The record gives the reactivity of an RNA of 177 nucleotides to DMS and 2A3. The DMS profile rests on 1,066 reads. For 2A3 the reverse transcriptase was SuperScript II with manganese. Reactivities are given for positions 27 through 126. The 2A3 profile rests on 761 reads. The data come from the RNA Mapping Database (RMDB), library RFM100. Conditions: 150 mM KOAc, 10 mM MgCl2 and 150 mM bicine (pH 8.5), 24 C.

[RMDB]
RNA sequence: GGGAACGACUCGAGUAGAGUCGAAAAGACCGUAGGUGAAUAAGUUUUCUUAUUCUUAAUAAAAACCUACGUAGAUGGUGAACAGACAGAAUUUUCUGCUUCUGGACACCUUAGGCUCAGAAGAUUGACCCGGUAGGUAUUUCGAUACCUACCGGGUAAAAGAAACAACAACAACAAC
Reactivity to DMS in 0.01 (KOAc 150mM, MgCl2 10mM, bicine 150mM(pH8.5), 24C), signal-to-noise 1, nucleotides 027 to 126: g000a130c210c000g000u010a050g020g000u030g000a020a000u000a000a000g000u020u080u010u090c000u000u000a010u010u000c000u000u000a070a060u030a120a020a080a210a160c000c000u000a000c000g000u010a080g000a140u000g000g000u000g000a060a250c000a030g000a020c030a000g020a030a250u070u020u020u000c000u000g000c090u040u050c000u000g000g000a300c020a000c020c000u000u010a030g000g050c000u000c070a150g010a150a080g000a150u030u020g020
Reactivity to 2A3 in 0.01 (KOAc 150mM, MgCl2 10mM, bicine 150mM(pH8.5), 24C), signal-to-noise 2, nucleotides 027 to 126: g030a020c000c050g000u000a000g040g000u030g000a000a000u000a000a020g000u040u090u170u270c000u030u010a000u010u000c000u000u030a070a010u060a080a090a070a000a000c000c000u000a000c000g050u020a100g000a130u150g010g010u000g000a010a000c000a010g020a000c000a000g050a110a110u070u200u110u020c010u000g080c070u040u020c000u000g010g000a000c000a000c000c000u010u050a030g010g010c000u000c160a160g000a230a030g040a090u070u240g070